An RNA of 177 nucleotides, treated with 2A3 and DMS and read out base by base. The RNA was probed in 150 mM KOAc, 10 mM MgCl2 and 150 mM bicine (pH 8.5) at 24 C. The DMS profile rests on 2,985 reads.
[RMDB]
RNA sequence: GGGAACGACUCGAGUAGAGUCGAAAAAGAUAUGGAAAUGGGAACUACGUGCGAAAUUCCUUGCUCGAAGAACUUCCAUCGGAAACGAUGGAAGGGAGAGCCUGCACACGCCCAUUUCCUAAGUCAACUCUCUUCUAUUGUUCGCAAUAGAAGAGAGAAAAGAAACAACAACAACAAC
Reactivity to 2A3 in 0.01 (KOAc 150mM, MgCl2 10mM, bicine 150mM(pH8.5), 24C), signal-to-noise 3, nucleotides 027 to 126: a010g040a020u030a030u100g010g010a000a020a000u030g000g000g050a190a060c210u230a060c300g000u000g020c040g100a180a200a300u300u240c080c000u090u130g010c000u030c040g300a300a050g000a040a010c000u000u000c000c000a000u000c000g000g020a070a010a000c000g000a010u000g000g010a000a010g020g000g000a030g000a000g000c000c030u180g000c030a020c000a010c040g030c000c000c000a000u000u000u000c000c000u000a030a010g010u000c010a000a130
Reactivity to DMS in 0.01 (KOAc 150mM, MgCl2 10mM, bicine 150mM(pH8.5), 24C), signal-to-noise 2, nucleotides 027 to 126: a140g000a050u000a090u010g000g000a000a020a010u010g000g000g000a120a040c150u010a300c060g020u000g020c010g000a080a100a150u010u010c300c030u000u000g010c020u010c010g000a110a130g000a140a240c000u000u000c000c010a000u000c000g000g000a060a020a070c000g000a020u000g010g000a010a010g000g000g010a020g000a010g000c000c150u000g010c010a040c020a030c050g000c000c000c000a010u000u000u000c000c010u000a010a060g000u000c030a110a170